An RNA of 207 nucleotides, treated with 2A3 and read out base by base. Source: RMDB library VIROID, as collected in RNAgym. The RNA was probed in 150 mM KOAc, 10 mM MgCl2 and 150 mM bicine (pH 8.5) at 24 C. For 2A3 the reverse transcriptase was SuperScript II with manganese.

RNA sequence: GGGAACGACUCGAGUAGAGUCGAAAAUACGGUAUGGCGAGGCUUGCCUCGGAGCCAAGCGGGAGGGCUCCCGGGGCGCCGCACGGGCGCAGUGCUGCGCGAGACUUCUUUGGCCUUGAUGUUACGGACAAAUUCCGUAACCGUGUGAGGCCAACAUAGACAUAUCUUGGUUCGCCAAGAUAUGUCUAAAAGAAACAACAACAACAAC
Reactivity to 2A3 in 0.01 (KOAc 150mM, MgCl2 10mM, bicine 150mM(pH8.5), 24C), signal-to-noise 2, nucleotides 027 to 156: u150a020c060g020g040u130a080u140g100g020c060g040a050g100g030c110u160u200g070c000c000u000c000g020g000a000g010c000c000a100a030g070c110g000g040g020a050g020g010g010c040u120c150c070c040g000g000g030g000c010g000c020c000g000c000a020c000g060g070g000c040g000c030a030g080u120g200c130u030g000c050g000c020g010a020g090a080c040u070u050c050u110u150u040g000g030c010c000u050u000g030a080u090g040u030u000a000c000g000g040a000c090a140a200a170u300u000c000c000g000u000a010a000c010c000g090u080g100u090g060a000g030g000c000c000a010a000c010a010u020